[RMDB]
RNA sequence: GGGAACGACUCGAGUAGAGUCGAAAAGGUCCUCGCUUCGGCGAGGACCAGAGCACCACUCCUGCGGGAGUUAAGGCCAAACGGACAGCCGGGUGCAAAGCCAAUUGUUUAAGUUCGCUUAAACAAACAAAUACGAAAACUUCGGUUUUCGUAUUUGAAAAGAAACAACAACAACAAC
Reactivity to 2A3 in 0.01 (KOAc 150mM, MgCl2 10mM, bicine 150mM(pH8.5), 24C), signal-to-noise 1, nucleotides 027 to 126: g000g030u000c000c000u000c000g000c020u060u100c210g110g000c000g020a000g020g000a000c000c000a000g000a000g000c000a000c000c000a000c010u000c000c010u080g040c280g070g010g000a000g000u030u190a120a060g000g010c000c000a060a110a030c100g000g020a020c020a020g000c030c000g010g020g000u010g000c000a000a000a030g000c000c020a030a080u090u030g020u010u010u000a010a010g000u010u050c180g030c110u000u010a000a020a000c000a000a040a020
Reactivity to DMS in 0.01 (KOAc 150mM, MgCl2 10mM, bicine 150mM(pH8.5), 24C), signal-to-noise 3, nucleotides 027 to 126: g020g020u000c000c000u000c020g010c000u000u030c170g020g020c000g020a020g010g010a000c000c000a020g010a080g010c010a010c010c010a070c010u000c000c000u000g040c170g040g010g010a010g010u000u010a030a080g010g020c010c010a040a070a120c230g010g010a040c050a270g000c000c000g010g020g000u000g010c010a060a030a140g010c020c020a030a140u000u000g010u000u000u000a000a010g010u000u010c220g020c000u000u000a000a010a010c000a020a040a190